[RMDB]
RNA sequence: GGGAACGACUCGAGUAGAGUCGAAAAUUAACCUCUAAAUCGAUAAGCCGUCAGUGUCCGAUGGGGUACUGAUUGUGAUGACGAUAGUAAGUCAGCAGGUGGAAACACUUUGUGCGUGGGUUAGGUAGGAAAAGAUUUUCUUCGGAAAAUCUUUUCCAAAAGAAACAACAACAACAAC
Reactivity to 2A3 in 0.01 (KOAc 150mM, MgCl2 10mM, bicine 150mM(pH8.5), 24C), signal-to-noise 4, nucleotides 027 to 126: u120u000a020a060c000c010u020c110u090a170a170a070u050c010g010a020u000a030a040g000c010c010g000u010c000a010g010u000g010u000c030c040g180a250u300g150g010g000g000u010a000c000u000g000a000u020u020g020u040g010a040u050g030a020c000g020a010u060a110g130u090a120a070g000u030c030a000g010c000a010g050g000u000g000g010a030a050a010c010a000c030u160u250u050g030u050g040c050g000u050g000g030g020u000u040a060g040g090u130a040
Reactivity to DMS in 0.01 (KOAc 150mM, MgCl2 10mM, bicine 150mM(pH8.5), 24C), signal-to-noise 3, nucleotides 027 to 126: u030u010a030a030c010c000u000c150u020a040a050a050u060c010g000a040u010a170a300g000c000c030g000u000c010a000g000u000g000u000c000c000g010a230u040g050g020g010g000u000a020c010u020g000a000u000u000g000u020g000a070u010g020a030c020g060a050u010a160g000u000a090a080g010u000c020a000g010c000a010g030g000u000g000g010a230a100a100c060a020c020u000u050u030g040u000g000c020g040u000g010g000g020u000u000a020g010g000u010a160